[RMDB]
RNA sequence: GGGAACGACUCGAGUAGAGUCGAAAAACGCUCACCUUCGGGUGAGCGUAAAAAACCUUUGUGGUCCUGACGCAACAGCAUAUUGUUCCCAUUGGGAACGUUUAUGACAUGCGUUCAGGACCACUCUGGUAAAAACUACACGGUUCGCCGUGUAGAACAUAGACGUGAGUUUCGACUCACGUCUAUGAAAAGAAACAACAACAACAAC
Reactivity to 2A3 in 0.01 (KOAc 150mM, MgCl2 10mM, bicine 150mM(pH8.5), 24C), signal-to-noise 2, nucleotides 027 to 156: a000c010g000c010u030c010a010c000c080u100u080c180g050g000g000u040g000a000g000c010g030u000a000a000a000a000a000a000c000c000u000u050u000g000u000g010g000u000c000c000u010g040a000c000g010c020a090a060c070a160g110c020a010u010a000u010u150g020u010u000c000c020c080a220u200u300g010g000g010a000a010c010g020u020u110u000a040u000g070a170c050a080u020g000c000g040u150u150c040a000g000g000a000c000c000a000c000u000c000u000g000g030u050a010a090a000a000a070c020u010a000c000a000c000g000g100u090u100c270g040c080c000g000u020g000u000a000g000a020a000